Overview: An RNA of 170 nucleotides, treated with 2A3 and DMS and read out base by base. The data come from the RNA Mapping Database (RMDB), library 15KLIB. For DMS the reverse transcriptase was MarathonRT. For 2A3, 81,343 sequencing reads were counted.

[RMDB]
RNA sequence: GGGAACGACUCGAGUAGAGUCGAAAAAGUAGGUGACUAUGUCAUUAUUAGUGAAAAAUUGUUUGUGCGUAGUAAGGAAGAAGACGGAUUUGCCUUCUACCCUGCUUGCACUAAUGGUCAUGCUGUACAAGAUAGCAGUUCGCUGCUAUCAAAAGAAACAACAACAACAAC
Reactivity to 2A3 in 0.01 (KOAc 150mM, MgCl2 10mM, bicine 150mM(pH8.5), 24C), signal-to-noise 9, nucleotides 027 to 129: a000g120u100a010g020g040u040g020a030c030u060a050u170g060u050c050a020u030u210a070u080u180a080g100u080g140a060a040a010a050a080u160u140g050u080u060u070g020u020g000c020g010u010a000g010u020a030a050g010g010a000a000g000a010a010g010a020c040g060g090a190u100u110u300g040c000c000u000u000c000u000a020c000c000c000u010g000c000u000u010g000c000a000c010u000a010a010u030g020g000u050c020a020u080g060c030u040g020u110a050c020a040a080
Reactivity to DMS in 0.01 (KOAc 150mM, MgCl2 10mM, bicine 150mM(pH8.5), 24C), signal-to-noise 9, nucleotides 027 to 129: a050g040u000a010g000g000u030g010a050c060u000a000u000g020u040c070a070u010u050a060u010u040a050g020u000g000a020a070a040a090a080u050u030g010u010u000u000g030u030g000c030g020u000a020g030u040a040a050g000g030a130a020g000a000a000g020a030c000g030g040a210u040u040u040g000c020c000u020u040c020u000a030c010c000c000u010g010c010u000u030g040c030a010c030u020a030a020u020g020g010u000c030a020u030g030c000u040g020u030a070c150a120a090